[RMDB]
An RNA of 177 nucleotides, treated with DMS and 2A3 and read out base by base. In probing experiments dimethyl sulfate is read out at A N1 and C N3, which are open when not base-paired. The 2A3 profile rests on 4,507 reads. For DMS, 2,833 sequencing reads were counted. High 2A3 reactivity points to a flexible backbone, as in loops and unpaired stretches. Source: RMDB library OK2TST, as collected in RNAgym. The reactions ran in a buffer of 150 mM KOAc, 10 mM MgCl2 and 150 mM bicine (pH 8.5), at 24 C. For 2A3 the reverse transcriptase was SuperScript II with manganese.
RNA sequence: GGGAACGACUCGAGUAGAGUCGAAAACAUGCUCUUCAUCGCUACAUCGGCACACGGCGAAGUCGAAACCAAAUCGCGUAGCAUUCCGAGAUACUGUGAACCCUGGCCGGGGAACAGAAACGCGAUAAGUCUUACGAGUAUUCGUACUCGUAAGACUAAAAGAAACAACAACAACAAC
Reactivity to DMS in 0.01 (KOAc 150mM, MgCl2 10mM, bicine 150mM(pH8.5), 24C), signal-to-noise 4, nucleotides 027 to 126: c130a090u000g010c020u000c050u000u000c060a120u010c050g000c030u010a120c080a070u000c020g000g000c020a050c050a070c060g000g030c000g020a050a040g020u000c030g030a020a100a190c060c030a060a110a030u000c000g010c010g010u000a120g010c100a100u010u010c060c090g030a080g020a120u010a090c020u000g000u010g000a220a230c020c000c000u010g030g020c210c160g000g000g000g010a110a040c080a020g000a050a090a030c030g020c020g000a010u010a040
Reactivity to 2A3 in 0.01 (KOAc 150mM, MgCl2 10mM, bicine 150mM(pH8.5), 24C), signal-to-noise 3, nucleotides 027 to 126: c010a030u090g000c020u000c000u120u100c030a110u100c020g000c000u030a000c010a070u000c000g030g000c010a010c010a010c050g020g020c020g010a030a040g060u030c020g040a180a020a040c020c000a080a050a030u020c010g000c010g000u010a010g050c060a090u180u000c030c010g100a070g020a140u080a150c010u030g030u030g120a170a130c010c010c020u030g150g000c080c030g010g000g000g000a000a000c000a000g000a040a110a000c000g000c000g010a010u030a120